[RMDB]
RNA sequence: GGGAACGACUCGAGUAGAGUCGAAAAAGACUAACGAGCUGAUCGGGCUGGGCGCGGAUCUCUCGGCGCAGUUCGGUGGCAGCACGUCGGAUGCCGUGUCGGCCCUGUCGUCGCUGCUGCGCGGCGACUUCGGCCUACGAUUCGUCGUAGGCCGAAGAAAAGAAACAACAACAACAAC
Reactivity to DMS in 0.01 (KOAc 150mM, MgCl2 10mM, bicine 150mM(pH8.5), 24C), signal-to-noise 2, nucleotides 027 to 126: a140g020a080c030u000a140a090c080g000a080g010c040u000g010a100u010c110g010g010g000c000u010g020g020g030c010g010c030g000g000a130u010c170u000c150u000c000g010g010c020g000c030a040g020u000u000c030g010g020u010g010g000c010a050g030c010a060c050g000u010c130g020g000a100u000g000c000c020g010u010g010u010c000g010g000c050c040c010u000g020u000c010g010u000c010g040c010u010g010c150u020g000c150g030c000g000g000c010g000a020
Reactivity to 2A3 in 0.01 (KOAc 150mM, MgCl2 10mM, bicine 150mM(pH8.5), 24C), signal-to-noise 2, nucleotides 027 to 126: a010g010a030c030u050a070a000c020g070a020g070c070u040g030a060u100c010g020g020g000c040u070g080g080g000c300g020c060g240g000a140u030c070u000c040u040c130g030g000c040g030c030a050g000u050u060c030g060g040u020g120g010c010a010g000c020a000c040g020u020c030g120g080a110u110g090c020c020g000u040g040u040c000g030g030c000c000c000u000g000u000c000g000u000c000g000c050u070g010c030u160g010c050g000c000g050g010c000g010a020